[RMDB]
RNA sequence: GGGAACGACUCGAGUAGAGUCGAAAACUAUGUGCCUGACCCCGCUCCUACCAAGCGGCAGUUGCUGUCCGCGGCGUUCAUCGACCACUUGCGCCACCUCGGCCGGAUUCCUGCAACCAUCCGGUACCACCCCAGUAGGAUUCGUCCUACUGGGGUGAAAAGAAACAACAACAACAAC
Reactivity to 2A3 in 0.01 (KOAc 150mM, MgCl2 10mM, bicine 150mM(pH8.5), 24C), signal-to-noise 2, nucleotides 027 to 126: c030u020a110u210g060u090g010c010c000u040g020a060c030c000c010c020g000c000u030c000c030u030a070c000c000a090a010g030c000g030g000c030a060g000u160u150g100c050u030g070u100c040c050g070c020g030g000c000g030u020u040c030a100u040c010g070a100c020c050a040c040u080u100g010c040g010c030c000a030c000c020u050c030g070g010c010c010g030g020a020u130u140c030c060u110g040c020a060a030c030c000a050u010c020c040g060g000u020a080c020
Reactivity to DMS in 0.01 (KOAc 150mM, MgCl2 10mM, bicine 150mM(pH8.5), 24C), signal-to-noise 3, nucleotides 027 to 126: c050u000a060u020g020u010g000c040c010u010g010a090c060c020c020c010g000c030u010c070c020u010a060c080c100a090a140g010c040g000g000c060a070g010u000u010g010c050u010g000u000c060c020g000c030g030g010c050g000u000u000c060a040u010c070g010a100c050c030a040c050u000u010g010c060g000c030c000a110c060c040u010c070g000g010c040c000g000g000a060u000u000c040c050u000g010c130a040a060c080c120a090u000c020c030g010g010u000a120c140
The data come from the RNA Mapping Database (RMDB), library OK2TST. The record gives the reactivity of an RNA of 177 nucleotides to 2A3 and DMS. For DMS, 2,381 sequencing reads were counted. As a SHAPE reagent, 2A3 marks flexible, mostly unpaired nucleotides at the ribose 2'-OH. The reactions ran in a buffer of 150 mM KOAc, 10 mM MgCl2 and 150 mM bicine (pH 8.5), at 24 C.